[RMDB]
RNA sequence: GGGAACGACUCGAGUAGAGUCGAAAAGAUUCACUUCAAUCCAUGUAUGUUGGUGUGGGUUGGGGUGGAAUUUAGUUCAAAUUCUACUCCAAUCCACCUCAACACAUGUGGAUUGAUGUAAAUCCGACAUGUGUUGACCAUUCGUGGUCAACACAUGAAAAGAAACAACAACAACAAC
Reactivity to DMS in 0.01 (KOAc 150mM, MgCl2 10mM, bicine 150mM(pH8.5), 24C), signal-to-noise 3, nucleotides 027 to 126: g000a030u010u000c070a030c000u000u000c000a010a000u000c010c000a010u000g000u000a030u000g000u000u000g010g000u000g000u000g000g000g010u000u000g000g000g010g010u000g000g000a010a000u000u000u010a130g010u030u030c200a030a010a010u000u000c000u000a010c000u000c000c000a010a010u000c000c010a000c000c000u000c000a000a000c000a000c040a020u000g020u000g000g010a000u000u000g010a010u000g010u000a030a010a010u010c000c040g010a190
Reactivity to 2A3 in 0.01 (KOAc 150mM, MgCl2 10mM, bicine 150mM(pH8.5), 24C), signal-to-noise 8, nucleotides 027 to 126: g020a020u040u030c030a010c010u000u000c010a000a000u000c000c000a010u020g010u020a020u010g000u000u000g010g010u010g000u000g010g000g000u000u000g000g000g000g000u040g000g000a000a000u020u010u030a160g100u090u170c080a010a000a000u000u000c000u010a000c000u000c000c000a000a000u000c000c000a000c000c000u000c000a000a000c000a000c000a000u010g000u000g010g000a000u000u000g000a000u010g000u020a010a010a010u010c020c020g040a030

Background: This 177-nucleotide RNA was probed chemically with DMS and 2A3. Reactivities are given for positions 27 through 126. 2A3 adducts were read by reverse transcription with SuperScript II with manganese. The reactions ran in a buffer of 150 mM KOAc, 10 mM MgCl2 and 150 mM bicine (pH 8.5), at 24 C.